[RMDB]
RNA sequence: GGGAACGACUCGAGUAGAGUCGAAAAACGACAAUCCUGUUUGAAGUGCCAACGACACAGGAGACGGAGAUAUGAACUGCGCAUAUGAACGCGAUCCUGUCGUCUUUAUCGUCGACGACGAUCAUUAGAGGGGCGUAUAUUUCGAUAUACGCCCCUCAAAAGAAACAACAACAACAAC
Reactivity to DMS in 0.01 (KOAc 150mM, MgCl2 10mM, bicine 150mM(pH8.5), 24C), signal-to-noise 1, nucleotides 027 to 126: a050c080g010a160c200a140a070u000c040c030u000g010u000u000u040g030a140a170g000u000g000c070c150a050a080c090g010a270c080a020c070a000g000g000a080g040a100c050g010g010a090g010a030u000a030u010g000a040a060c180u000g000c100g020c000a000u000a000u020g000a160a030c070g030c050g000a130u000c020c050u000g020u000c030g030u000c010u000u010u020a070u000c050g030u000c090g000a080c130g000a030c030g000a000u000c090a080u000u000a100
Chemical mapping of a 177-nucleotide RNA with DMS. The reactions ran in a buffer of 150 mM KOAc, 10 mM MgCl2 and 150 mM bicine (pH 8.5), at 24 C. It was measured as part of the RMDB library OK2TST.